[RMDB]
RNA sequence: GGGAACGACUCGAGUAGAGUCGAAAAUUGAUUGAAGAGUUGGCCUGCUUUAAUCUCUGUCUUCUGCUCUUGGGCAAAAACUUUACACAGCUUUGUGACAGGAGAUCAGUUGAAUUCCCAGAAGAUGUAGAUGACUUCACUGCUGAAGAGCUGUUUGCUCUCAAUAAGCCUUCGGGCUUAUUGAGAGAAAAGAAACAACAACAACAAC
Reactivity to 2A3 in 0.01 (KOAc 150mM, MgCl2 10mM, bicine 150mM(pH8.5), 24C), signal-to-noise 1, nucleotides 027 to 156: u050u040g010a030u020u070g060a070a030g040a010g010u020u070g010g050c060c030u050g010c070u040u040u050a040a070u000c020u000c020u050g030u050c020u000u020c010u030g040c040u030c000u060u030g020g000g010c040a030a000a030a060a090c140u300u270u210a110c100a030c010a090g100c040u130u100u020g100u050g100a080c000a020g000g020a000g000a020u120c000a010g020u010u060g010a060a080u020u070c010c010c000a000g060a060a000g000a010u100g010u120a000g060a250u170g100a110c000u150u100c100a010c050u070g000c040u100g130a020a040g020a040g070c020u020g070u060u020u190g040

An RNA of 207 nucleotides, treated with 2A3 and read out base by base.